[RMDB]
RNA sequence: GGGAACGACUCGAGUAGAGUCGAAAACGCUCUUUUGAGCUCAUCAGGGACAGUACACACUGUCCGACGGUAGAGUCGUCGACACCUCUCCCCCCCCCAGGUACUAUCCUCUUUCAAGGAUGUGUUCCCUAGGGGGGUGGGUGUACCUCUUUUCGGAGGGUUGGAUAAAGUUCGCUUUAUCCAACCCAAAAGAAACAACAACAACAAC
Reactivity to 2A3 in 0.01 (KOAc 150mM, MgCl2 10mM, bicine 150mM(pH8.5), 24C), signal-to-noise 1, nucleotides 027 to 156: c110g000c030u050c090u060u230u190u300g060a060g000c100u110c040a210u050c030a060g050g010g000a000c000a010g010u120a120c090a040c080a000c170u000g010u000c030c000g050a000c000g020g090u080a000g000a000g040u150c000g010u010c060g080a080c020a100c080c010u050c030u000c030c000c060c000c000c080c000c000c000a020g010g000u000a000c000u000a000u000c010c000u060c060u120u270u090c210a010a000g000g020a000u020g060u000g010u300u040c110c000c000u130a130g010g000g000g010g000g000u120g050g010g000u000g000u020a050c000c000u080c030u010u070u000u000c010g000g010a010

Structure probing data (2A3) for a 207-nucleotide construct. Values cover nucleotides 27 to 156. For 2A3 the reverse transcriptase was SuperScript II with manganese. The RNA was probed in 150 mM KOAc, 10 mM MgCl2 and 150 mM bicine (pH 8.5) at 24 C. The 2A3 profile rests on 482 reads. 2A3 is a SHAPE reagent: it acylates the 2'-hydroxyl of flexible nucleotides of all four kinds.